[RMDB]
RNA sequence: GGGAACGACUCGAGUAGAGUCGAAAAGAUAUGGACUCCUUAGGCAGCAACAGCGAGCGUCGGAAACGACGCUCGACAUGCUGUCUAAUGGAGUCCUAAGUCAAAGUUGUAAGUUCGCUUACAACAACUGUAAUUCGGAGUUCGCUCCGAAUUACAGAAAAGAAACAACAACAACAAC
Reactivity to DMS in 0.01 (KOAc 150mM, MgCl2 10mM, bicine 150mM(pH8.5), 24C), signal-to-noise 1, nucleotides 027 to 126: g030a040u000a300u000g000g000a000c000u000c000c000u000u000a000g000g010c000a000g050c010a070a120c300a240g000c020g000a020g050c000g040u000c000g000g020a130a080a240c000g070a000c000g000c000u000c010g000a000c060a150u000g000c010u010g000u000c000u000a000a000u020g060g010a000g000u030c000c000u000a030a110g020u000c030a160a130a130g000u000u000g010u000a000a000g030u010u000c170g050c020u000u000a010c010a000a010c020a120a080